[RMDB]
RNA sequence: GGGAACGACUCGAGUAGAGUCGAAAAUUAUAUUUAUUGGCAUUAAGUGUAUGAGAGAGAGAGAGAGAGAGAGAGUGUGUGUGUGUGUGUGUGUGUGUGUGUCAGAAGUGGUGUAUCAGCUGCCACACUUGCUAACUGUAUUCGUACAGUUAGCAAGAAAAGAAACAACAACAACAAC
Reactivity to 2A3 in 0.01 (KOAc 150mM, MgCl2 10mM, bicine 150mM(pH8.5), 24C), signal-to-noise 1, nucleotides 027 to 126: u020u000a060u040a040u060u070u070a140u090u060g020g000c010a010u090u050a120a000g070u030g020u070a030u060g030a060g010a020g000a010g000a000g000a010g000a000g000a000g020a030g000a010g010a000g000a000g020u010g000u030g070u010g040u000g030u010g000u000g000u000g040u000g010u020g000u000g010u000g000u000g020u000g020u020c030a020g060a130a020g060u040g030g000u050g000u050a070u150c030a040g000c020u040g010c000c000a020c020a010
Reactivity to DMS in 0.01 (KOAc 150mM, MgCl2 10mM, bicine 150mM(pH8.5), 24C), signal-to-noise 2, nucleotides 027 to 126: u000u010a080u010a130u000u000u000a070u010u000g020g010c040a070u000u000a030a060g030u000g000u000a040u010g010a080g020a070g010a070g010a070g000a080g000a100g020a130g010a110g000a080g000a040g000a000g010u000g060u000g000u010g000u000g000u010g030u000g010u020g020u030g040u000g010u000g020u000g020u010g010u000g000u000c040a060g020a060a060g010u000g010g020u000g000u010a040u010c130a120g020c080u000g000c020c020a020c070a170

The record gives the reactivity of an RNA of 177 nucleotides to 2A3 and DMS. The 2A3 profile rests on 2,235 reads.